Structure probing data (DMS and 2A3) for a 177-nucleotide construct. Source: RMDB library OK1LIB, as collected in RNAgym. For 2A3 the reverse transcriptase was SuperScript II with manganese. The RNA was probed in 150 mM KOAc, 10 mM MgCl2 and 150 mM bicine (pH 8.5) at 24 C. Reactivities are given for positions 27 through 126. For DMS, 8,812 sequencing reads were counted. For DMS the reverse transcriptase was MarathonRT.
[RMDB]
RNA sequence: GGGAACGACUCGAGUAGAGUCGAAAACAAAUAAGGAUUACCUGGUAACAGAAAUGGUGCAAGAAGAGGGAAUGUUGCGGUGGCUUGAACAUUGGUACUAGUAGCAAUGUUACCAAUGGUACCAUUACAGUAUGACCCUAUUCGUAGGGUCAUACUGAAAAGAAACAACAACAACAAC
Reactivity to DMS in 0.01 (KOAc 150mM, MgCl2 10mM, bicine 150mM(pH8.5), 24C), signal-to-noise 5, nucleotides 027 to 126: c060a110a070a060u040a070a080g000g020a120u020u000a050c050c010u000g000g020u000a080a030c080a030g000a050a110a050u020g010g030u010g000c030a070a060g030a070a030g020a090g000g000g000a080a060u020g010u000u000g010c250g010g010u010g000g030c070u010u010g000a060a050c070a030u000u010g000g000u000a010c040u010a100g000u050a130g060c140a070a060u000g000u030u000a030c020c020a030a070u000g000g000u020a060c030c030a110u010u010a050
Reactivity to 2A3 in 0.01 (KOAc 150mM, MgCl2 10mM, bicine 150mM(pH8.5), 24C), signal-to-noise 7, nucleotides 027 to 126: c030a010a090a090u280a140a060g060g010a100u110u150a050c020c000u030g040g010u030a050a020c010a010g110a050a080a050u160g050g010u070g010c030a080a040g060a100a010g020a150g050g030g010a070a110u120g010u040u060g040c050g030g010u050g010g040c080u030u090g040a040a010c030a030u020u050g020g010u050a010c010u010a050g210u020a030g050c050a060a140u070g020u030u040a000c000c000a020a060u110g000g010u010a020c000c010a050u090u140a030